[RMDB]
RNA sequence: GGGAACGACUCGAGUAGAGUCGAAAAACGAUCUACGGAUCGAAGUCCAGAAAACAAUGAUGUGAUAAUUUCCAAGCACAUAUCUGAUGUUUCCAUGUGGAAUUUAAUUACUGAGUUUCCUGGACAAGGCUCGCCACAUAUUCGUAUGUGGCGAGCCAAAAGAAACAACAACAACAAC
Reactivity to 2A3 in 0.01 (KOAc 150mM, MgCl2 10mM, bicine 150mM(pH8.5), 24C), signal-to-noise 2, nucleotides 027 to 126: a000c000g000a000u000c000u090a060c200g070g000a000u030c030g030a010a000g000u000c000c000a000g030a020a000a000a000c000a030a080u220g040a030u070g130u000g000a000u020a060a000u030u010u010c000c030a000a050g140c050a060c000a080u090a140u070c180u290g080a210u020g150u050u130u040c120c210a210u110g080u070g000g020a000a000u000u030u050a080a160u000u000a000c000u030g000a000g030u010u010u000c040c000u000g000g000a000c000a010a010